[RMDB]
RNA sequence: GGGAACGACUCGAGUAGAGUCGAAAAGCUAGUCGGUGACGACUAGCAGCCACGACUAAGGUCGUGGGAAGAUGCUCACAAACUGCGUAGUGGCAUCAAUAACUACAUCAUACGCAGAAACCGGAUUAACGGAUAACAUUAAAAUUUAAGAUGUAGGGACGAGCAUACGGUUCGCCGUAUGCUCGUCAAAAGAAACAACAACAACAAC
Reactivity to 2A3 in 0.01 (KOAc 150mM, MgCl2 10mM, bicine 150mM(pH8.5), 24C), signal-to-noise 1, nucleotides 027 to 156: g000c000u000a010g000u010c020g090g000u010g020a000c000g000a010c000u000a000g000c000a000g020c000c000a000c000g000a010c000u080a220a040g180g000u000c000g000u000g000g010g000a000a070g000a000u080g000c020u180c300a010c040a010a000a290c040u000g000c000g030u020a000g000u000g000g000c000a010u000c000a000a230u240a060a020c010u000a010c000a000u000c000a020u010a030c010g010c040a010g000a010a010a000c060c000g120g010a080u130u220a200a090c000g000g060a090u030a010a050c060a060u160u200a030a040a010a100u150u070u150a070a030g000a000u000g000u000a010g040g140